[RMDB]
RNA sequence: GGGAACGACUCGAGUAGAGUCGAAAAAGAUGUGUGAAUGGGUGCAGUCAAUCUUCAGUAGCCGCCCAGUUAGUCAGUGACCACCCAAAUAAGUUUAAAUCGAGGCAUUUAAAUCACCACUAGCUGCGCAUACACAUAAGUUCGCUUAUGUGUAUGCAAAAGAAACAACAACAACAAC
Reactivity to DMS in 0.01 (KOAc 150mM, MgCl2 10mM, bicine 150mM(pH8.5), 24C), signal-to-noise 6, nucleotides 027 to 126: a050g010a060u000g020u000g010u010g000a110a160u010g010g020g020u000g000c100a090g010u000c050a060a080u010c050u020u010c090a100g010u000a110g010c050c040g010c050c050c010a060g010u010u000a040g010u000c110a060g010u000g000a050c050c020a040c010c010c020a040a080a090u000a080a100g000u000u000u000a030a040a040u000c040g010a190g010g020c070a070u000u000u000a010a040a070u000c050a040c030c050a030c040u000a060g020c040u010g020c300
Reactivity to 2A3 in 0.01 (KOAc 150mM, MgCl2 10mM, bicine 150mM(pH8.5), 24C), signal-to-noise 2, nucleotides 027 to 126: a010g080a080u080g060u040g010u010g110a070a070u080g030g010g020u040g010c070a030g050u040c030a040a120u030c020u110u060c040a050g040u060a010g030c040c020g040c030c020c030a000g000u020u030a010g010u040c120a000g000u000g020a030c010c010a010c020c010c000a040a070a030u090a040a010g020u050u060u070a060a040a010u060c120g060a150g030g090c020a020u000u050u070a030a050a010u040c030a010c050c000a030c030u020a030g020c030u020g050c070
This 177-nucleotide RNA was probed chemically with DMS and 2A3. Values cover nucleotides 27 to 126. For 2A3 the reverse transcriptase was SuperScript II with manganese.